[RMDB]
The data come from the RNA Mapping Database (RMDB), library M2RFOK. Chemical mapping of a 207-nucleotide RNA with 2A3. Reactivities are given for positions 27 through 156.
RNA sequence: GGGAACGACUCGAGUAGAGUCGAAAAACUGCCAUACGUGGCAGAAACACGCCUUACCAGGACUAAACAGCGUGACUAAAAAACAGUCCUUCAUACCUGAUCUGGAGGGUAGAUCAGGAAUACUAAAAAAAUCGGGUGAAGUUCGCUUCACCCGAAACCUUUCAAUUCUGUUCGCAGAAUUGAAAGGAAAAGAAACAACAACAACAAC
Reactivity to 2A3 in 0.01 (KOAc 150mM, MgCl2 10mM, bicine 150mM(pH8.5), 24C), signal-to-noise 2, nucleotides 027 to 156: a000c000u000g010c000c000a030u030a050c160g070u010g000g000c000a000g020a000a020a000c000a000c010g010c000c010u040u030a030c030c090a020g000g000a010c000u080a090a040a060c010a020g000c000g020u020g050a100c140u070a010a000a020a010a010a060c050a010g000u000c010c000u040u100c060a110u080a120c010c010u000g010a000u020c010u030g070g070a070g080g030g020u050a020g000a000u010c010a000g010g070a000a010u070a030c070u110a020a020a050a040a020a030a120u060c000g000g000g000u000g000a000a020g000u040u110c140g050c090u000u000c000a000c000c000c010g000a010a010a010